[RMDB]
RNA sequence: GGGAACGACUCGAGUAGAGUCGAAAAGAUAUGGAUUAGCUACCCACCAAAGUGCGACGAAGAACUCGGAAACGAGGGAGUCGUGCUUUGAGGCUAAUCCUAAGUCAAACACCAGUUCGCUGGUGAACUAUCGUAAAACCUUCGGGUUUUACGAUAGAAAAGAAACAACAACAACAAC
Reactivity to 2A3 in 0.01 (KOAc 150mM, MgCl2 10mM, bicine 150mM(pH8.5), 24C), signal-to-noise 2, nucleotides 027 to 126: g080a030u240a190u270g000g000a000u030u000a010g000c010u110a300c000c020c030a000c020c000a000a000a020g000u010g010c010g030a010c010g170a300a080g020a060a050c000u000c000g000g000a050a110a070c010g000a030g000g020g010a010g000u000c010g000u010g000c000u030u000u000g010a010g000g000c000u000a000a000u010c000c000u000a050a020g090u050c090a130a080a090c020a020c000c000a010g020u070u060c250g080c160u020g000g010u000g020a030a010
Reactivity to DMS in 0.01 (KOAc 150mM, MgCl2 10mM, bicine 150mM(pH8.5), 24C), signal-to-noise 2, nucleotides 027 to 126: g010a070u000a200u000g000g000a000u000u000a000g030c020u000a110c050c000c020a300c090c000a000a010a000g050u000g000c000g000a010c000g010a150a190g020a090a130c000u000c000g000g000a110a100a140c010g020a010g000g000g000a020g000u000c000g020u000g000c000u020u000u010g000a040g030g010c000u000a000a020u000c000c000u000a000a100g000u000c140a100a080a110c000a030c000c000a000g020u010u020c210g020c000u000g000g000u000g000a020a170